[RMDB]
Chemical mapping of a 177-nucleotide RNA with 2A3 and DMS.
For 2A3 the reverse transcriptase was SuperScript II with manganese.
For DMS, 4,298 sequencing reads were counted.
It was measured as part of the RMDB library OK1LIB.
The 2A3 profile rests on 2,624 reads.
RNA sequence: GGGAACGACUCGAGUAGAGUCGAAAAGAAGAGAAGCGCGCGAAUUGGAAACCAGCGAACCAUAUUACGCGCGCAAGGAACCGGGCCUUGGUUCGUUGGAAAGAGUAGAUAAUAUCGCUGGUAAAGAGGUCAUUUAUGGAUUCGUCCAUAAAUGACCAAAAGAAACAACAACAACAAC
Reactivity to 2A3 in 0.01 (KOAc 150mM, MgCl2 10mM, bicine 150mM(pH8.5), 24C), signal-to-noise 4, nucleotides 027 to 126: g090a030a050g060a000g040a130a020g020c000g000c000g000c010g000a000a040u050u020g030g020a040a050a090c010c000a010g000c000g010a030a050c010c010a040u070a040u280u090a120c010g010c000g020c010g010c000a000a020g010g010a030a020c000c000g040g070g010c000c050u070u080g020g000u030u010c060g040u090u060g030g040a040a060a000g070a010g050u190a020g030a140u140a100a040u110a130u090c000g000c000u000g000g050u040a040a030a050g190a030
Reactivity to DMS in 0.01 (KOAc 150mM, MgCl2 10mM, bicine 150mM(pH8.5), 24C), signal-to-noise 3, nucleotides 027 to 126: g000a100a140g000a150g020a160a300g000c000g010c000g080c000g000a050a020u000u010g000g000a240a090a080c000c000a010g010c000g000a050a300c030c010a000u040a030u000u010a060c000g020c000g000c010g000c000a010a020g010g020a060a070c020c040g000g020g030c040c060u000u030g000g000u010u010c050g020u010u000g000g010a040a040a060g000a130g030u010a080g000a070u020a060a070u030a240u020c010g000c010u000g010g000u040a060a130a110g010a150